[RMDB]
RNA sequence: GGGAACGACUCGAGUAGAGUCGAAAAGAUAUGGAAUAGCGAUGAAACCCAGACACGAGGAUCUCGGAAACGAGGGAGUGUUUGGGUGGAGCUAUUCCUAAGUCAAACGUCAUCUUCGGAUGACGAAGCAUAUUACUUUGUUCGCAAAGUAAUAUGCAAAAGAAACAACAACAACAAC
Reactivity to DMS in 0.01 (KOAc 150mM, MgCl2 10mM, bicine 150mM(pH8.5), 24C), signal-to-noise 8, nucleotides 027 to 126: g000a040u000a300u000g000g000a010a000u000a010g020c000g010a110u020g000a150a160a030c010c010c000a010g010a010c000a000c000g010a100g020g000a030u000c010u000c000g010g000a080a080a180c000g000a020g010g000g010a030g010u000g000u000u000u000g000g000g010u000g000g000a040g010c000u000a000u000u000c000c000u000a010a070g000u000c040a080a100a230c020g010u000c000a000u000c000u000u020c180g020g000a010u000g000a010c000g000a040a090
Reactivity to 2A3 in 0.01 (KOAc 150mM, MgCl2 10mM, bicine 150mM(pH8.5), 24C), signal-to-noise 7, nucleotides 027 to 126: g010a010u070a040u160g000g010a000a010u010a000g010c030g300a300u040g010a060a010a010c000c000c000a000g010a010c010a000c010g110a240g040g020a030u010c000u000c010g010g040a070a070a040c010g000a000g000g000g010a030g000u000g000u000u020u000g010g000g000u000g000g000a000g000c000u000a000u000u000c000c000u000a030a010g020u010c040a080a050a050c020g000u000c000a010u000c000u050u050c260g150g000a010u010g000a000c000g010a030a000
Description
An RNA of 177 nucleotides, treated with DMS and 2A3 and read out base by base. Source: RMDB library TTRDEL, as collected in RNAgym. The RNA was probed in 150 mM KOAc, 10 mM MgCl2 and 150 mM bicine (pH 8.5) at 24 C. Values cover nucleotides 27 to 126. The 2A3 profile rests on 40,578 reads.